RNA sequence: GGGAACGACUCGAGUAGAGUCGAAAAUUGACCAAGUUAUCAAUGACAUGGAAAGUUUCAAAGACGAUAAAGUAGCUGUGUUACAUCAAAUUGAUUCAAUGGAAGAAAACUCAGACAAACUGAUUGAAGUGUGUUAUCCUUUCGAGGAUAACACACUAAAAGAAACAACAACAACAAC
Reactivity to 2A3 in 0.01 (KOAc 150mM, MgCl2 10mM, bicine 150mM(pH8.5), 24C), signal-to-noise 3, nucleotides 027 to 126: u010u040g070a070c000c000a030a000g050u110u090a030u050c060a130a060u080g030a080c020a030u030g020g090a030a020a090g030u030u050u110c100a160a090a020g130a010c080g020a050u050a160a090a020g000u030a010g020c030u030g010u000g050u090u020a050c060a050u060c060a020a050a130u040u100g080a090u170u030c040a010a070u080g080g000a040a020g040a030a120a000a050c090u050c010a030g000a110c030a010a170a020c040u010g010a050u050u070g060a100
Reactivity to DMS in 0.01 (KOAc 150mM, MgCl2 10mM, bicine 150mM(pH8.5), 24C), signal-to-noise 3, nucleotides 027 to 126: u020u000g010a280c010c020a050a050g000u020u000a050u020c140a020a060u010g000a090c090a040u000g000g000a040a050a060g000u000u030u010c060a090a070a150g010a190c120g020a170u000a040a020a040g050u000a040g000c000u000g000u010g010u000u010a100c160a010u000c110a020a090a090u040u000g010a130u020u020c130a030a060u010g010g020a170a120g020a050a020a060a030c050u010c030a010g000a110c060a060a080a060c070u020g000a030u010u000g020a040